[RMDB]
RNA sequence: GGGAACGACUCGAGUAGAGUCGAAAAUGUAACAAAGCUUGUGUCGACAGUUAAUGGUAUGAUGACAAGGAAUAUGAAUGCUCUGUCAUCAUAUGGUCCACAAACAAGUGAAUCGUUAACUCCAGUCACUGAUAAUGGUAUUCGUACCAUUAUCAGUAAAAGAAACAACAACAACAAC
Reactivity to 2A3 in 0.01 (KOAc 150mM, MgCl2 10mM, bicine 150mM(pH8.5), 24C), signal-to-noise 9, nucleotides 027 to 126: u190g010u040a020a010c020a050a100a020g010c010u010u010g010u010g020u060c030g010a010c020a110g100u180u290a160a090u230g100g000u020a000u010g000a000u000g010a000c030a060a070g110g060a100a100u260a120u300g250a200a070u200g030c020u050c040u050g000u000c000a000u000c000a000u000a000u010g030g000u000c010c020a010c020a030a180a020c000a040a040g010u010g070a030a090u090c060g010u010u020a050a020c010u020c020c020a040g090u110c070
Reactivity to DMS in 0.01 (KOAc 150mM, MgCl2 10mM, bicine 150mM(pH8.5), 24C), signal-to-noise 9, nucleotides 027 to 126: u040g010u010a040a030c030a060a100a250g010c010u000u010g000u000g000u020c300g020a020c020a190g010u040u040a090a110u040g020g030u000a000u000g000a010u000g000a010c000a020a030g000g010a050a070u030a160u040g020a140a070u040g000c020u010c060u000g000u000c000a010u000c020a000u000a000u000g000g010u000c010c100a050c090a060a060a050c030a020a040g000u000g000a080a100u020c150g000u000u000a040a090c060u010c020c010a130g000u020c170